[RMDB]
RNA sequence: GGGAACGACUCGAGUAGAGUCGAAAAGCGGAGAUGUUCGCAUCUCCGCAAAUCCCUGGAUGCAGCGAGUUAAAACGGAUAGGUUGGCAAGUAUCCAUCGCAAAAGUAUUAGCUUCGGCUAAUACAACAACUUAAACCUGUUCGCAGGUUUAAGUUGAAAAGAAACAACAACAACAAC
Reactivity to DMS in 0.01 (KOAc 150mM, MgCl2 10mM, bicine 150mM(pH8.5), 24C), signal-to-noise 4, nucleotides 027 to 126: g010c010g000g010a020g000a010u010g000u010u020c230g030c020a020u000c000u000c000c010g010c000a010a050a080u010c010c000c000u010g020g010a040u000g020c060a110g020c040g010a060g000u000u010a020a040a070a100c090g010g010a090u000a040g010g000u010u000g010g000c050a050a100g020u000a030u000c020c030a030u010c160g020c180a060a080a110a130g010u000a010u000u000a010g010c000u000u010c190g030g000c000u000a000a000u000a000c010a070a160
Reactivity to 2A3 in 0.01 (KOAc 150mM, MgCl2 10mM, bicine 150mM(pH8.5), 24C), signal-to-noise 2, nucleotides 027 to 126: g020c000g000g020a000g000a010u020g000u110u150c170g000c090a010u000c010u010c000c000g000c000a000a000a000u000c000c010c020u010g060g000a030u060g000c040a020g000c030g080a120g170u100u210a130a190a020a040c040g050g080a210u080a160g110g130u040u060g090g000c030a060a010g020u000a000u000c030c030a060u080c100g040c050a030a070a030a040g020u010a000u010u000a000g020c000u030u020c190g090g000c000u000a000a000u000a000c000a000a000
An RNA of 177 nucleotides, treated with DMS and 2A3 and read out base by base. It was measured as part of the RMDB library M2PK50. For DMS, 3,710 sequencing reads were counted. As a SHAPE reagent, 2A3 marks flexible, mostly unpaired nucleotides at the ribose 2'-OH. DMS adducts were read by reverse transcription with MarathonRT.